Chemical mapping of a 207-nucleotide RNA with DMS and 2A3. The DMS profile rests on 1,915 reads. For 2A3, 2,143 sequencing reads were counted. The reactions ran in a buffer of 150 mM KOAc, 10 mM MgCl2 and 150 mM bicine (pH 8.5), at 24 C. For DMS the reverse transcriptase was MarathonRT.
[RMDB]
RNA sequence: GGGAACGACUCGAGUAGAGUCGAAAACCUACUCAAUACGUCCUCGUCGUACAGAACGGUAACAUGUUUUCCGAACAGCCGCGCUUGGGUAUACGAGUAUACACCUUACCCAACCCUCGCCAACGGGAGUGCAUCCACGAGUUCGCUCGUGGAUGAAGAAGUGAAACAGGUUCGCCUGUUUCACUUCAAAAGAAACAACAACAACAAC
Reactivity to DMS in 0.01 (KOAc 150mM, MgCl2 10mM, bicine 150mM(pH8.5), 24C), signal-to-noise 1, nucleotides 027 to 156: c020c010u000a040c020u000c060a140a180u000a070c010g010u010c010c000u000c030g020u020c090g040u000a140c070a020g010a040a130c040g060g000u000a090a100c080a120u000g000u000u000u000u000c070c070g000a100a130c060a120g050c000c010g080c030g010c070u000u000g010g010g010u010a080u000a080c120g010a140g040u000a130u000a090c120a100c010c030u000u000a030c030c000c010a040a080c010c010c030u010c050g000c040c040a110a240c000g010g010g010a060g000u030g020c030a040u000c000c000a010c010g000a000g020u000u020c210g010c000u020c010g040u000g000g020a000u000g030a010a080
Reactivity to 2A3 in 0.01 (KOAc 150mM, MgCl2 10mM, bicine 150mM(pH8.5), 24C), signal-to-noise 3, nucleotides 027 to 156: c000c000u040a050c060u050c020a090a070u070a140c010g070u030c000c010u040c000g050u020c020g030u120a080c050a080g080a140a030c000g010g020u090a080a040c070a150u110g020u050u030u020u060c040c000g010a090a030c010a040g020c030c050g070c020g020c050u020u030g040g010g000u020a060u020a070c060g020a010g080u010a050u040a070c080a090c050c000u070u100a060c040c010c000a010a010c000c000c030u060c020g010c030c010a010a010c040g010g030g020a030g050u070g040c020a000u010c000c010a000c000g020a010g010u110u080c180g050c100u000c000g000u000g000g020a000u000g000a000a000